[RMDB]
RNA sequence: GGGAACGACUCGAGUAGAGUCGAAAAGAAACCUGGGGUUUGGGCCUGCUUCUGUCACUUGUCAGCUGUGUGGCCUGGAGACAAUCAGUUAGCCUGCCUAAGCCUCUGUCUCCUCAGCUGUAAUAUGCAGAUAAUGGUGCUUGCCUGUGCACCUCAAUCUACUUCGGUCAUUCGUGACCGAAGUAGAAAAAGAAACAACAACAACAAC
Reactivity to 2A3 in 0.01 (KOAc 150mM, MgCl2 10mM, bicine 150mM(pH8.5), 24C), signal-to-noise 1, nucleotides 027 to 156: g010a110a050a040c060c050u000g000g000g010g000u000u000u000g010g000g050c000c040u080g000c000u040u010c020u020g050u050c000a040c070u110u050g080u120c050a010g040c060u070g090u120g050u150g300g000c000c070u030g040g000a070g040a040c010a010a060u150c010a000g020u020u060a010g040c040c100u010g010c010c010u010a010a010g050c000c000u000c010u000g010u000c030u000c000c010u050c030a020g000c000u010g000u040a020a120u070a200u280g030c010a030g020a030u150a180a130u170g010g010u000g050c020u040u190g100c010c030u090g010u050g030c000a000c020c000u080c040a050a020